[RMDB]
Annotation
Chemical mapping of a 177-nucleotide RNA with DMS. The reactions ran in a buffer of 150 mM KOAc, 10 mM MgCl2 and 150 mM bicine (pH 8.5), at 24 C. DMS (dimethyl sulfate) methylates the pairing face of unpaired adenines and cytosines.
RNA sequence: GGGAACGACUCGAGUAGAGUCGAAAAAUUCAGUUGUUUGAUGAAAAAUUGUUGCUACAAGUUUGUAAAACUGGCAUAGAGGCUAUUUUGAAAAUGAUAAAGGCGUGACAAAUUAAAGCAAAGUUCAAAGGCACAUACUAUUCGUAGUAUGUGCCUUAAAAGAAACAACAACAACAAC
Reactivity to DMS in 0.01 (KOAc 150mM, MgCl2 10mM, bicine 150mM(pH8.5), 24C), signal-to-noise 2, nucleotides 027 to 126: a060u000u040c070a150g030u000u020g000u010u000u060g020a080u040g000a120a070a010a170a050u000u000g010u040u000g000c010u000a300c090a080a010g010u000u000u010g010u000a120a020a020a080c070u000g020g010c050a030u000a030g010a170g020g000c030u020a060u030u000u020u000g000a030a020a040a010u000g000a190u050a090a150a030g000g000c090g010u010g000a000c000a010a050a060u000u000a050a050a110g000c080a030a030a200g020u040u010c100a060